[RMDB]
RNA sequence: GGGAACGACUCGAGUAGAGUCGAAAAGUAAAUAAAGCGCACCAAGAUGGAGGUGCGCAACCAGCGUGUCCAUGGAUCACGCAUCCACGCGUCUACCAACACGCGAAUGGUAAUACAAAUAAAAAAACAACAUAGAUGUGUUCGCACAUCUAUGUUGAAAAGAAACAACAACAACAAC
Reactivity to 2A3 in 0.01 (KOAc 150mM, MgCl2 10mM, bicine 150mM(pH8.5), 24C), signal-to-noise 4, nucleotides 027 to 126: g020u030a000a040a110u140a100a140a020g010c010g000c000a000c000c010a050a040g150a120u240g120g080a110g020g000u000g000c000g000c000a000a010c000c010a000g020c010g000u000g010u000c090c090a160u150g020g010a050u110c060a020c040g000c010a030u110c060c010a070c080g000c000g000u000c010u070a190c020c010a030a010c000a000c010g020c010g030a070a080u100g000g020u040a060a030u130a090c080a030a090a040u260a100a110a010a010a000a000a010
Reactivity to DMS in 0.01 (KOAc 150mM, MgCl2 10mM, bicine 150mM(pH8.5), 24C), signal-to-noise 3, nucleotides 027 to 126: g020u010a040a050a140u000a080a170a110g010c000g000c010a000c000c000a110a080g000a250u000g010g030a120g030g020u000g000c010g010c000a010a010c070c060a140g000c010g010u000g000u000c070c100a110u000g000g030a200u010c110a040c060g030c020a080u000c110c160a040c100g020c030g000u000c110u000a160c080c030a140a060c170a000c010g010c000g010a050a110u010g000g000u000a060a100u000a040c110a030a050a090u070a010a020a020a050a110a060a160
Annotation:
Chemical mapping of a 177-nucleotide RNA with 2A3 and DMS. For DMS, 2,552 sequencing reads were counted. For DMS the reverse transcriptase was MarathonRT. The reactions ran in a buffer of 150 mM KOAc, 10 mM MgCl2 and 150 mM bicine (pH 8.5), at 24 C. 2A3 adducts were read by reverse transcription with SuperScript II with manganese.